[RMDB]
RNA sequence: GGGAACGACUCGAGUAGAGUCGAAAACACCCGAGAGGCAUUUCUCGUCAAUCUAUAUCGCACUGUGCAAGCCAGCAGUCGCCUUCCCGUCGUCGACCCGCGCCGUUCCAGCUUCCACUCUUUCGCUUAUAUUACUAGACUUCGGUCUAGUAAUAUAAAAAGAAACAACAACAACAAC
Reactivity to DMS in 0.01 (KOAc 150mM, MgCl2 10mM, bicine 150mM(pH8.5), 24C), signal-to-noise 5, nucleotides 027 to 126: c190a150c030c010c010g030a070g010a070g010g020c070a050u010u010u000c040u000c030g020u000c090a080a070u000c070u010a080u000a080u010c060g010c050a060c070u010g000u010g020c070a080a090g000c040c020a100g010c070a070g010u000c080g010c040c050u000u010c010c010c010g020u010c050g000u000c040g010a080c040c020c030g020c080g000c030c020g010u000u000c020c030a070g010c060u000u000c030c030a060c130u000c060u000u000u000c060g020c180u000
Reactivity to 2A3 in 0.01 (KOAc 150mM, MgCl2 10mM, bicine 150mM(pH8.5), 24C), signal-to-noise 3, nucleotides 027 to 126: c050a030c010c020c000g030a050g000a010g060g090c080a080u000u200u040c040u020c020g100u040c030a040a070u030c030u110a100u020a040u230c040g010c030a060c070u050g020u090g070c040a060a020g030c020c020a000g000c020a020g050u050c020g000c010c000u040u020c000c010c000g030u030c010g040u020c010g040a100c010c000c010g010c010g000c010c010g020u030u020c000c010a010g020c020u070u020c020c010a080c020u050c050u030u060u020c010g020c040u020
The record gives the reactivity of an RNA of 177 nucleotides to DMS and 2A3. In probing experiments dimethyl sulfate is read out at A N1 and C N3, which are open when not base-paired. For 2A3, 4,558 sequencing reads were counted. The reactions ran in a buffer of 150 mM KOAc, 10 mM MgCl2 and 150 mM bicine (pH 8.5), at 24 C.